[RMDB]
RNA sequence: GGGAACGACUCGAGUAGAGUCGAAAACCUCCAAGAUGAGGGAAUGGUAGUCCGUGACAAACAAAGACCAGCUAUCUGGAGAGACUACGAGGGUAAGACAUGGGAUCAACUUGAGGAGGGUAUCUAAUGGGAGCAAAAACAAGUAAUUAUGGGUUUAGCGAUUUAUAUUAUUCGUAAUAUAAAUCGCAAAAGAAACAACAACAACAAC
Reactivity to DMS in 0.01 (KOAc 150mM, MgCl2 10mM, bicine 150mM(pH8.5), 24C), signal-to-noise 2, nucleotides 027 to 156: c070c010u010c040c030a140a240g040a080u000g020a050g030g000g010a040a080u000g010g040u000a090g020u000c040c010g100u020g000a170c060a160a060a110c080a060a160a140g030a120c000c010a170g000c110u010a070u000c000u040g030g010a130g000a110g020a120c010u000a040c020g010a070g000g020g020u000a050a080g010a090c090a130u000g010g000g010a060u010c100a100a150c080u030u000g020a080g030g030a060g000g000g040u010a060u000c040u000a040a090u010g000g030g000a090g000c080a010a060a110a060a040c090a070a050g000u000a060a100u010u010a090u010g000g060g010u000u000u020a150
Reactivity to 2A3 in 0.01 (KOAc 150mM, MgCl2 10mM, bicine 150mM(pH8.5), 24C), signal-to-noise 4, nucleotides 027 to 156: c000c000u020c040c020a110a030g090a090u100g010a040g040g020g010a070a100u090g060g000u010a020g020u010c050c050g050u070g040a050c090a090a190a000c030a050a100a040g050a060c010c000a010g040c050u160a020u240c020u010g020g010a020g000a000g000a050c010u050a020c080g020a050g010g000g010u060a040a050g010a040c030a100u070g030g010g010a030u060c040a010a070c040u040u090g010a030g050g040a020g000g010g000u040a060u000c050u080a070a050u080g010g010g030a020g050c040a030a020a000a040a050c050a070a000g050u070a030a050u060u110a070u170g050g000g010u050u060u080a020
The data come from the RNA Mapping Database (RMDB), library OK3TST. Structure probing data (DMS and 2A3) for a 207-nucleotide construct. The RNA was probed in 150 mM KOAc, 10 mM MgCl2 and 150 mM bicine (pH 8.5) at 24 C. For DMS, 2,132 sequencing reads were counted. 2A3 adducts were read by reverse transcription with SuperScript II with manganese.